Chemical mapping of a 177-nucleotide RNA with 2A3 and DMS. Values cover nucleotides 27 to 126. Conditions: 150 mM KOAc, 10 mM MgCl2 and 150 mM bicine (pH 8.5), 24 C. Source: RMDB library OK2TRN, as collected in RNAgym. The DMS profile rests on 1,927 reads.

RNA sequence: GGGAACGACUCGAGUAGAGUCGAAAACGAAUUGGCAAUGGAAAGUGCAAUCUUCUUGGCGGAGGCGGCAGACUUCGCACCGGUCACUUCGACCUCCACCAUCUUGCGCGCGCCUUCGCCGUCGCGAAAUACGAUCCCGAUUCGUCGGGAUCGUAUUAAAAGAAACAACAACAACAAC
Reactivity to 2A3 in 0.01 (KOAc 150mM, MgCl2 10mM, bicine 150mM(pH8.5), 24C), signal-to-noise 2, nucleotides 027 to 126: c020g050a010a060u120u100g120g000c090a050a130u130g070g060a230a100a050g060u070g020c030a040a160u060c030u200u030c040u100u230g000g020c000g030g000a000g010g020c000g020g060c050a030g020a090c100u130u090c110g000c060a040c030c020g010g000u030c010a010c130u100u110c170g060a100c020c020u000c030c000a060c010c010a090u040c050u090u110g030c030g000c020g040c000g010c070c000u020u000c000g000c000c000g000u020c020g000c000g040a050
Reactivity to DMS in 0.01 (KOAc 150mM, MgCl2 10mM, bicine 150mM(pH8.5), 24C), signal-to-noise 2, nucleotides 027 to 126: c060g010a070a100u000u020g010g010c060a120a100u010g010g010a120a090a110g000u000g010c040a070a080u000c090u000u000c080u000u010g030g010c010g000g000a000g000g010c010g020g060c090a130g000a040c090u010u000c070g020c050a030c150c090g000g000u000c020a040c180u000u000c090g010a080c060c010u000c070c030a110c100c070a060u000c110u000u000g010c080g000c090g000c030g010c000c020u000u000c020g000c020c020g010u000c060g030c100g000a120